[RMDB]
Conditions: 150 mM KOAc, 10 mM MgCl2 and 150 mM bicine (pH 8.5), 24 C. This 177-nucleotide RNA was probed chemically with 2A3 and DMS.

RNA sequence: GGGAACGACUCGAGUAGAGUCGAAAAGAUAUGGAACGUCCCAUGGGAGAUCCAAAUCGGAAACGAUUUGAAGAUCGAGGAUCAUGGUCGUUCCUAAGUCAAAGGGGCAAGCUUCGGCUUGCCCCAACAAGAACGUAUCCUUCGGGAUACGUUCUUGAAAAGAAACAACAACAACAAC
Reactivity to 2A3 in 0.01 (KOAc 150mM, MgCl2 10mM, bicine 150mM(pH8.5), 24C), signal-to-noise 1, nucleotides 027 to 126: g000a020u020a000u060g000g000a020a000c020g040u100c110c070c000a020u020g070g020g050a260g000a010u040c000c020a010a000a000u010c000g000g000a010a020a020c020g000a000u080u070u000g080a230a090g020a000u020c020g020a180g240g020a160u150c010a000u000g000g000u010c020g020u010u000c000c000u020a030a000g020u010c020a120a070a240g000g020g030g000c030a010a020g000c030u060u300c300g080g000c030u000u000g040c000c000c020c000a000a020
Reactivity to DMS in 0.01 (KOAc 150mM, MgCl2 10mM, bicine 150mM(pH8.5), 24C), signal-to-noise 1, nucleotides 027 to 126: g010a010u000a160u020g000g010a020a000c010g010u010c300c050c000a010u010g000g000g010a050g010a000u000c000c030a010a010a000u000c010g020g000a040a060a100c010g010a030u000u000u000g000a160a190g010a010u000c000g020a140g030g000a050u010c010a010u000g010g000u000c000g020u010u010c000c000u000a000a040g000u000c020a030a100a140g010g000g000g010c000a020a000g000c000u000u000c300g020g000c000u000u000g010c000c000c000c000a020a010
It was measured as part of the RMDB library TTRDES. The 2A3 profile rests on 2,094 reads. The DMS profile rests on 1,648 reads.